Chemical mapping of a 177-nucleotide RNA with DMS and 2A3. Source: RMDB library RFM100, as collected in RNAgym. Reactivities are given for positions 27 through 126. The DMS profile rests on 1,142 reads. For 2A3, 1,361 sequencing reads were counted. The RNA was probed in 150 mM KOAc, 10 mM MgCl2 and 150 mM bicine (pH 8.5) at 24 C.
[RMDB]
RNA sequence: GGGAACGACUCGAGUAGAGUCGAAAAGAGCUGCGAGCGGCGGUAGCGCCCCCUGUGAGAAGGCCCGAGAUGCCCCUGCCACUGUGAACGGUGCCGCCCGACAGGACACGCUCAGCCCCUGACACGCCUUACUGCCAGCUUUCGAGCUGGCAGUAAGAAAAGAAACAACAACAACAAC
Reactivity to DMS in 0.01 (KOAc 150mM, MgCl2 10mM, bicine 150mM(pH8.5), 24C), signal-to-noise 1, nucleotides 027 to 126: g030a120g000c060u000g000c070g030a040g010c130g000g010c070g030g010u000a030g000c090g020c020c010c000c030c050u000g010u000g000a090g000a250a020g060g000c060c000c090g000a190g000a160u030g010c040c000c030c000u000g000c040c000a010c000u000g000u000g000a280a090c050g040g030u000g000c000c010g060c080c030c090g000a130c070a140g010g000a120c030a070c100g000c080u040c060a130g000c000c010c000c030u050g000a150c030a110c120g000c170
Reactivity to 2A3 in 0.01 (KOAc 150mM, MgCl2 10mM, bicine 150mM(pH8.5), 24C), signal-to-noise 2, nucleotides 027 to 126: g040a000g020c050u070g030c070g060a150g070c050g000g000c010g010g070u050a000g080c000g080c020c000c000c000c000u030g020u060g040a140g050a090a020g040g010c000c000c080g060a060g010a030u090g010c000c010c000c020u020g000c010c000a010c000u020g090u060g040a140a050c040g020g060u050g030c000c000g020c000c000c000g020a020c040a030g010g090a030c000a000c070g000c000u000c020a020g110c000c000c000c000u010g020a020c000a020c120g060c040